[RMDB]
RNA sequence: GGGAACGACUCGAGUAGAGUCGAAAAUUCUGGUCCAAAACGCGUGGGCAGGUCGUGGUGGGCCUAACUCUGGUAGGUUUCGGGCACAUUGCGGGCCUAACAGAUGAGGGGAUAGUGGUCUAUUUCGGAAUUUCGGACCGAAGCAAGCCGAGAGGAAGUGUUAUAACGUGUUCGCACGUUAUAACACAAAAGAAACAACAACAACAAC
Reactivity to 2A3 in 0.01 (KOAc 150mM, MgCl2 10mM, bicine 150mM(pH8.5), 24C), signal-to-noise 4, nucleotides 027 to 156: u080u030c060u080g020g030u090c020c000a030a060a040a070c060g040c040g070u130g000g010g040c050a050g000g040u060c010g030u130g010g020u090g020g010g000c020c000u020a020a010c030u000c020u060g050g020u060a050g010g040u040u080u300c120g020g070g060c110a090c060a100u070u300g050c030g000g020g030c000c000u000a020a000c010a010g080a080u110g030a050g010g040g020g000a050u040a060g140u120g060g010u020c020u100a100u060u060u040c030g020g040a050a090u080u140u100c060g010g020a030c010c030g020a010a000g030c040a030a020g000c000c000g040a010g000a010g050g060a090a080
Reactivity to DMS in 0.01 (KOAc 150mM, MgCl2 10mM, bicine 150mM(pH8.5), 24C), signal-to-noise 1, nucleotides 027 to 156: u010u020c050u000g050g000u010c010c000a010a020a090a130c090g020c110g020u000g000g040g010c210a080g040g010u000c030g040u000g020g000u000g000g010g050c000c040u010a030a150c160u000c000u010g040g000u000a040g000g010u000u000u020c050g070g040g060c030a050c030a120u000u020g000c060g000g000g040c070c050u010a040a050c060a030g000a050u020g010a220g000g070g050g000a190u000a090g020u010g010g010u010c060u010a080u030u000u010c040g010g010a150a180u000u000u030c100g000g010a220c020c010g000a120a110g030c100a020a090g000c010c000g000a100g000a110g010g000a030a200